[RMDB]
RNA sequence: GGGAACGACUCGAGUAGAGUCGAAAAGGGGUCAAACUUGAGAGCCCAUGGGACAUGCUCUGAAGCCUCCACGGAGCAACAGCCCAUGGUGCUCAAUGAUGGUUUGACGGAGGCACCCAAACUUGCACGUUGGUGGUUCGCCACCAACGUGCAAGAACACUAAUUUGAAGUUCGCUUCAAAUUAGUGAAAAGAAACAACAACAACAAC
Reactivity to 2A3 in 0.01 (KOAc 150mM, MgCl2 10mM, bicine 150mM(pH8.5), 24C), signal-to-noise 2, nucleotides 027 to 156: g050g010g040g000u010c000a000a000a000c000u020u020g050a010g000a000g070c030c000c030a000u000g000g000g000a120c000a030u020g000c010u010c010u020g060a110a020g020c030c000u000c010c000a010c010g030g000a000g140c010a020a070c060a090g300c000c000c000a000u020g000g030u170g000c030u020c010a050a050u030g020a010u060g000g000u010u000u000g000a000c010g010g000a000g000g000c010a030c000c010c000a030a070a040c000u000u000g000c000a000c020g010u000u020g000g040u010g030g040u070u110c260g020c110c020a000c000c010a010a010c000g000u000g000c000a000a000g000a000a000
Record summary
An RNA of 207 nucleotides, treated with 2A3 and read out base by base. The reactions ran in a buffer of 150 mM KOAc, 10 mM MgCl2 and 150 mM bicine (pH 8.5), at 24 C. As a SHAPE reagent, 2A3 marks flexible, mostly unpaired nucleotides at the ribose 2'-OH. Reactivities are given for positions 27 through 156.